[RMDB]
RNA sequence: GGGAACGACUCGAGUAGAGUCGAAAAACUGCUGUACAAGGAAACAAAGCAUUAUCAAGUGGAGAUGCAACGGUUAAGACUUCUCUUAAAGAAGUGGAUGCUGAGACUUUAAGACUAGGACUAAACGGUACUACUGUUUCCGCACCUACAGAUGUGGUAGUGCUCCAGUAUUCGUACUGGAGCACUAAAAAGAAACAACAACAACAAC
Reactivity to 2A3 in 0.01 (KOAc 150mM, MgCl2 10mM, bicine 150mM(pH8.5), 24C), signal-to-noise 2, nucleotides 027 to 156: a000c050u020g040c010u000g000u000a030c010a110a110g000g010a030a040a020c050a070a090a060g000c010a000u030u120a150u110c040a130a140g040u180g250g060a020g000a010u030g000c020a050a040c000g070g020u060u040a010a040g010a010c010u010u010c020u020c000u070u070a060a020a000g050a040a040g040u080g190g000a100u220g040c040u050g020a010g050a100c000u070u000u080a020a000g030a020c010u040a040g010g020a000c010u030a070a060a000c020g010g010u110a110c020u050a040c050u050g010u000u000u000c000c010g000c020a010c010c000u030a020c000a060g040a110u190g140u050g020g070